[RMDB]
RNA sequence: GGGAACGACUCGAGUAGAGUCGAAAACGCUCCCCUCUGUCCACCUUCGAGGGGGUUCACACCUCCAGUCGGCGGGCCGGCUGCUCUUCUUUCCCUUCUCUCGUCUUCCUCGGUCAACCUCUUGAGUUCCUCUUCUUCCUCCCUGCUGAGGCUCUUCACAGUGUAAUACGUUCGCGUAUUACACUGUAAAAGAAACAACAACAACAAC
Reactivity to DMS in 0.01 (KOAc 150mM, MgCl2 10mM, bicine 150mM(pH8.5), 24C), signal-to-noise 2, nucleotides 027 to 156: c040g050c070u000c000c000c010c100u000c060u010g020u010c020c030a070c030c020u000u000c080g000a220g060g010g020g050g010u000u020c270a130c130a200c030c020u020c020c020a130g020u000c080g020g050c070g000g020g030c010c070g020g000c020u000g030c030u000c050u010u010c050u010u000u030c010c010c020u000u000c000u020c030u000c040g000u000c030u000u000c020c020u010c030g020g000u000c040a070a080c030c010u000c000u000u010g020a130g010u000u000c010c000u000c010u010u000c040u010u000c030c020u000c020c050c060u000g010c060u000g030a150g020g050c040u010c010u000u000c020
Reactivity to 2A3 in 0.01 (KOAc 150mM, MgCl2 10mM, bicine 150mM(pH8.5), 24C), signal-to-noise 2, nucleotides 027 to 156: c080g060c050u070c010c000c030c010u040c050u040g120u010c030c010a050c010c040u080u070c060g040a240g000g020g000g000g000u170u180c050a070c010a040c030c010u010c040c000a060g020u030c010g020g040c010g040g040g000c010c000g020g000c030u050g000c000u000c000u080u040c010u050u060u090c030c010c000u060u020c050u010c020u010c020g050u010c020u050u000c000c020u040c030g040g040u030c020a060a060c010c010u000c050u090u070g040a040g040u050u040c020c010u040c040u140u010c020u150u050c030c020u000c010c000c010u010g020c030u040g020a040g030g010c020u010c000u010u030c030

Annotation
Structure probing data (DMS and 2A3) for a 207-nucleotide construct. The DMS profile rests on 5,100 reads. DMS adducts were read by reverse transcription with MarathonRT. The RNA was probed in 150 mM KOAc, 10 mM MgCl2 and 150 mM bicine (pH 8.5) at 24 C.